[RMDB]
RNA sequence: GGGAACGACUCGAGUAGAGUCGAAAAACAUUGAUAAAUUUUUAGUUAAAGUACUUACAAAUAUACUUGCCUUCAAAUUCUCAAUUAAUUUAGUCAUUACAAAUCAUGACAUAAAACUUACAUUACAACACCAGGUUCUAUUCGUAGAACCUGGUGUAAAAGAAACAACAACAACAAC
Reactivity to 2A3 in 0.01 (KOAc 150mM, MgCl2 10mM, bicine 150mM(pH8.5), 24C), signal-to-noise 1, nucleotides 027 to 126: a000c000a000u000u010g010a020u050a090a100a070u000u010u020u000u000a000g000u040u070a230a020a000g000u010a000c000u080u030a070c140a080a210a000u140a000u000a050c000u000u000g010c000c010u000u010c010a020a020a000u110u000c020u040c000a000a220u000u240a130a130u040u030u160a020g000u000c000a000u000u050a020c040a090a030a020u120c000a000u020g030a030c070a090u240a110a160a020a000c000u110u020a000c030a180u100u020a040c040a240